Chemical mapping of a 207-nucleotide RNA with 2A3. Reactivities are rounded to 0.1 and cut off at 0 and 3. 2A3 adducts were read by reverse transcription with SuperScript II with manganese. The RNA was probed in 150 mM KOAc, 10 mM MgCl2 and 150 mM bicine (pH 8.5) at 24 C.
[RMDB]
RNA sequence: GGGAACGACUCGAGUAGAGUCGAAAAUGUGAAGAGCCCUUCUGAGAUGAUGCGAUUUAUUGUCUUUCUGGUCGCUGGGGCUGCUCGAGCUGGGAGAUGGAUAUAUCUUGCUAAAGACGAGGACCAGAAGGCCUACUUAUUUGGUGAGAAAUGCUGGUCAACAAUGCCAGUUCGCUGGCAUUGUUGAAAAAGAAACAACAACAACAAC
Reactivity to 2A3 in 0.01 (KOAc 150mM, MgCl2 10mM, bicine 150mM(pH8.5), 24C), signal-to-noise 1, nucleotides 027 to 156: u140g010u040g020a030a030g020a030g010c000c000c000u060u040c080u070g060a090g000a070u090g000a020u060g000c030g030a040u020u060u130a200u150u270g010u030c000u020u110u010c030u010g030g000u030c000g020c080u040g000g000g000g040c030u020g000c000u010c070g020a040g030c020u070g030g030g000a030g000a060u010g100g000a020u030a020u020a010u160c040u050u050g230c060u110a170a090a000g040a010c050g030a030g020g060a050c000c000a000g020a020a000g020g000c000c000u040a060c020u100u060a120u120u090u060g030g010u020g030a060g070a070a050a030u150g050c100u110g000g040